[RMDB]
RNA sequence: GGGAACGACUCGAGUAGAGUCGAAAAAUAGCGCGCCGCGCGUAUUAUGCGAUACGCCGCAUACGCCGCAUAAUACGCAUACGCGCGUAUGCGUAUAUACGCGCGUAUUAUAUAGCGGCGUAUCGCCUGCCUUCGUAAGUUUCGACUUACGAAGGCAAAAAGAAACAACAACAACAAC
Reactivity to 2A3 in 0.01 (KOAc 150mM, MgCl2 10mM, bicine 150mM(pH8.5), 24C), signal-to-noise 1, nucleotides 027 to 126: a050u040a020g070c030g000c040g130c200c080g160c050g000c000g030u010a140u160u090a070u300g010c000g010a010u000a010c000g000c000c000g040c010a000u010a030c020g060c060c010g000c010a000u080a110a050u020a080c000g000c010a000u030a000c010g130c020g000c000g040u020a000u000g000c010g000u020a000u030a020u000a080c010g120c010g000c000g010u000a000u130u090a120u020a040u080a000g000c000g020g000c000g010u010a000u000c000g000c000c000
Reactivity to DMS in 0.01 (KOAc 150mM, MgCl2 10mM, bicine 150mM(pH8.5), 24C), signal-to-noise 2, nucleotides 027 to 126: a070u000a040g020c040g030c010g010c210c100g020c040g020c020g000u000a030u000u000a080u010g010c020g010a030u000a000c000g020c010c030g010c010a100u010a010c010g010c030c020g010c000a040u010a060a020u010a010c030g020c030a010u000a000c010g040c300g000c250g030u010a000u000g000c070g000u000a030u020a030u000a010c060g010c170g010c000g010u010a010u010u010a090u010a130u010a130g000c000g000g000c000g030u000a000u000c010g010c030c170